[RMDB]
RNA sequence: GGGAACGACUCGAGUAGAGUCGAAAACGGGGAAUUCGUUCCCCGAAAAAUCCUAAGUCUCGGUUAUGAGGUCCAUUGUCAGUCGGAAACGACUUGGAUUUAUGGACUACCCACCAUACGUGCCGAGAUAUGGAAAAAAGACGUAUUCGUACGUCAAAGUUAUAGUAAAGUUCGCUUUACUAUAACUAAAAGAAACAACAACAACAAC
Reactivity to DMS in 0.01 (KOAc 150mM, MgCl2 10mM, bicine 150mM(pH8.5), 24C), signal-to-noise 4, nucleotides 027 to 156: c050g000g010g020g030a040a040u000u000c200g020u000u010c000c000c000c000g020a000a030a050a110a090u000c000c010u000a090a210g010u000c000u000c010g000g030u000u010a050u000g000a220g040g000u000c010c000a030u000u010g010u000c000a050g000u000c010g030g010a170a110a280c020g010a020c000u000u000g030g020a040u010u000u000a010u000g010g000a040c010u000a050c020c000c020a300c120c020a060u000a050c300g030u010g010c010c010g010a020g020a030u010a130u010g020g000a020a050a090a050a090a090g000a030c010g020u000a050u000u000c240g010u000a010c000g010u000c020a060a080
Reactivity to 2A3 in 0.01 (KOAc 150mM, MgCl2 10mM, bicine 150mM(pH8.5), 24C), signal-to-noise 9, nucleotides 027 to 156: c010g010g000g010g020a010a010u050u030c060g070u090u010c020c010c000c000g000a010a000a000a000a010u020c010c000u030a130a030g020u000c000u000c000g020g020u140u150a030u080g050a030g020g010u000c000c000a010u000u010g020u020c010a010g010u000c010g020g050a100a090a100c020g000a000c000u050u110g100g000a030u120u260u160a010u010g010g010a010c010u030a040c020c010c020a080c010c020a040u070a160c130g110u140g010c000c000g000a000g010a000u020a030u030g000g030a050a060a020a010a030a030g010a000c000g010u010a020u070u170c260g020u060a010c000g000u000c010a030a110